[RMDB]
RNA sequence: GGGAACGACUCGAGUAGAGUCGAAAAUGGGAUACCAAUUGGGAAAAUACUGCUCAAACACGAGCUGCAGGUAUUCCUGAUUACAGUAAAGCCAGCAAUAUUCGUGUCUCUGCCGGUGUGGCGCUACGCGCCUCAUACCGUUCGCGGUAUGAGGCGCAAAAGAAACAACAACAACAAC
Reactivity to 2A3 in 0.01 (KOAc 150mM, MgCl2 10mM, bicine 150mM(pH8.5), 24C), signal-to-noise 1, nucleotides 027 to 126: u050g020g000g030a030u020a040c030c040a000a050u070u080g020g020g090a050a030a070a040u150a100c020u080g020c020u000c030a160a200a180c050a060c150g000a020g030c010u000g000c020a030g000g080u030a020u020u020c010c000u000g020a020u000u180a040c040a030g070u130a100a080a030g080c010c010a010g070c010a110a080u060a130u180u180c070g020u000g050u020c000u010c020u090g030c020c030g080g030u110g020u050g070g000c040g000c030u000a060c180
Reactivity to DMS in 0.01 (KOAc 150mM, MgCl2 10mM, bicine 150mM(pH8.5), 24C), signal-to-noise 3, nucleotides 027 to 126: u010g000g030g010a070u000a030c030c060a070a070u000u010g000g000g000a030a040a080a080u000a070c070u010g020c010u000c040a100a150a150c260a070c240g030a050g000c100u020g010c070a040g020g010u010a100u000u000c020c000u000g000a090u000u000a070c150a120g010u010a040a070a230g030c000c010a050g000c060a040a120u010a130u000u000c060g010u000g010u010c030u000c020u000g000c070c030g010g020u010g040u000g010g010c110g030c110u020a020c280